[RMDB]
RNA sequence: GGGAACGACUCGAGUAGAGUCGAAAAGGAAUGGUUCACUCAAGGCAGAAUUGAGACCGAUCGAAAAGGUGCAAGAAAACAAGACUAGAUCAUUCACAGCAGCGCCCAUUGACACAUUACUGGCAGGCAGAGCUAGUAGGUUCGCCUACUAGCUCUGAAAAGAAACAACAACAACAAC
Reactivity to DMS in 0.01 (KOAc 150mM, MgCl2 10mM, bicine 150mM(pH8.5), 24C), signal-to-noise 3, nucleotides 027 to 126: g000g030a040a090u010g040g010u000u020c050a100c150u000c020a080a130g000g000c110a080g010a070a100u020u000g000a060g000a050c020c010g000a100u020c170g000a070a030a070a100g000g000u000g010c110a120a070g000a080a080a070a080c150a070a080g000a060c010u030a100g020a080u000c040a090u000u000c020a030c090a080g010c030a040g030c020g010c010c020c010a050u030u000g000a060c110a040c050a070u040u030a060c010u010g000g000c030a060g020g000
Reactivity to 2A3 in 0.01 (KOAc 150mM, MgCl2 10mM, bicine 150mM(pH8.5), 24C), signal-to-noise 4, nucleotides 027 to 126: g040g040a100a060u090g020g040u100u060c040a030c030u000c050a030a040g110g000c060a060g120a180a140u090u080g020a040g070a090c030c030g000a070u120c110g090a050a040a000a040g070g010u060g000c050a090a000g040a120a090a060a010c070a050a010g040a060c070u060a030g000a050u040c010a050u080u120c030a040c010a120g070c000a000g010c010g030c020c000c000a050u030u140g010a020c050a000c000a100u020u210a110c050u010g020g000c020a040g000g010